[RMDB]
RNA sequence: GGGAACGACUCGAGUAGAGUCGAAAAAUCUUCCAGUUGAACUUCGUCUCUCGGGAGGUGGUCUUCGUGCCGAACGCCCACAAGAUGAAGAGGGCUGCGAUCACCAAAGCGGGGAUCCAUGGGUUCACUCCCUGAAAAACUUCGGUUUUUCAGGGAGAAAAGAAACAACAACAACAAC
Reactivity to DMS in 0.01 (KOAc 150mM, MgCl2 10mM, bicine 150mM(pH8.5), 24C), signal-to-noise 1, nucleotides 027 to 126: a140u000c090u000u000c060c000a130g030u000u000g040a120a190c040u000u000c030g000u000c060u020c060u010c300g020g000g000a200g020g020u010g000g000u000c000u040u020c270g020u010g000c060c040g000a160a060c070g010c040c000c000a090c240a180a100g000a030u000g000a060a060g020a070g030g010g050c030u010g000c180g020a030u000c000a040c000c020a060a040a210g000c080g000g010g000g000a000u010c040c060a050u010g020g000g010u020u000c110a170